[RMDB]
RNA sequence: GGGAACGACUCGAGUAGAGUCGAAAAAAACGGAAAUGCUGGGAAGGAUUUUUUCCCUGCCUGUCUGUCGCGCUCUCUGCACCCUCCGAUCUCUCUCUUCUAUCGCAUGCGCAGGAGCGGAUACCCAACUCCUCAUUAUCUUCGGAUAAUGAGGAGUAAAAGAAACAACAACAACAAC
Reactivity to DMS in 0.01 (KOAc 150mM, MgCl2 10mM, bicine 150mM(pH8.5), 24C), signal-to-noise 4, nucleotides 027 to 126: a050a050a030c040g010g000a050a040a030u010g000c010u010g000g010g010a040a010g020g020a060u000u030u020u010u000u000c000c010c000u000g000c000c050u010g020u010c000u000g000u010c060g020c060g000c020u000c010u030c020u000g010c050a160c040c050c020u000c110c010g010a080u020c030u000c020u000c020u010c030u010u000c050u010a060u030c050g030c120a090u010g020c100g000c020a030g000g000a030g010c020g000g000a110u040a100c010c000c000a120
Reactivity to 2A3 in 0.01 (KOAc 150mM, MgCl2 10mM, bicine 150mM(pH8.5), 24C), signal-to-noise 5, nucleotides 027 to 126: a000a000a000c080g010g010a080a110a000u090g000c030u060g020g020g010a040a060g130g120a260u170u130u050u010u020u070c000c000c000u010g000c000c010u040g030u000c010u000g040u040c020g020c000g010c110u010c000u000c010u020g010c020a050c020c010c010u020c020c010g070a120u010c030u000c000u000c020u000c040u180u020c040u100a070u040c010g040c130a060u090g030c020g000c050a030g000g040a010g000c010g000g010a020u090a090c000c010c000a000